Chemical mapping of a 207-nucleotide RNA with 2A3. Reactivities are rounded to 0.1 and cut off at 0 and 3. For 2A3 the reverse transcriptase was SuperScript II with manganese.
RNA sequence: GGGAACGACUCGAGUAGAGUCGAAAAGGGGAGGAUGAUGAAGCAAUGGUGCUGGGGAUAGAUGAGGAUACUUACGAUAUUCCUUGUAUGAACGAGGAGGUGUCCGAUUCCGAUCUUUUGGCGCAGACUAGUCUGUACGAGGACCCGUUCUUUGCCAGUAUCGACUUUCAUUCGUGAAAGUCGAUACAAAAGAAACAACAACAACAAC
Reactivity to 2A3 in 0.01 (KOAc 150mM, MgCl2 10mM, bicine 150mM(pH8.5), 24C), signal-to-noise 1, nucleotides 027 to 156: g120g000g000g000a040g070g000a050u100g010a070u070g070a050a050g000c080a040a110u140g040g030u060g000c030u000g000g000g040g020a000u080a080g020a000u040g010a000g020g000a010u020a030c020u120u030a070c090g100a140u130a200u200u000c000c000u030u000g040u040a170u170g150a160a060c010g000a030g010g000a000g070g000u010g030u010c000c000g040a010u020u060c030c000g080a080u090c040u020u120u110u120g020g000c000g000c030a000g000a030c000u000a030g030u000c000u060g090u090a020c050g000a080g030g030a030c010c000c010g000u070u020c030u040u000u070g060c040c000a020